[RMDB]
RNA sequence: GGGAACGACUCGAGUAGAGUCGAAAAGAUAUGGAAAUCCUACCCACCAAUACAGCUACGACGAAGCCUUGCUUAUCGGAAACGAUAAGCAAGGCAGAGUAGCUUGAUUGAGGGAUUUCCUAAGUCACUAUGGAUUCCAGUUCGCUGGAAUCCAUAGAAAAGAAACAACAACAACAAC
Reactivity to DMS in 0.01 (KOAc 150mM, MgCl2 10mM, bicine 150mM(pH8.5), 24C), signal-to-noise 1, nucleotides 027 to 126: g000a170u020a160u000g000g020a070a050a000u000c000c000u030a140c040c000c020a300c110c000a030a010u010a090c060a040g040c000u020a010c030g010a210c300g000a060a270g000c000c000u000u000g000c000u040u000a000u000c010g010g000a140a030a200c010g010a000u000a030a000g000c000a000a050g010g040c020a000g020a010g050u010a000g000c000u000u000g000a020u000u000g040a180g020g050g000a030u000u000u000c000c000u000a060a100g000u000c090a220
Record summary: An RNA of 177 nucleotides, treated with DMS and read out base by base. For DMS, 753 sequencing reads were counted. Values cover nucleotides 27 to 126. The reactions ran in a buffer of 150 mM KOAc, 10 mM MgCl2 and 150 mM bicine (pH 8.5), at 24 C.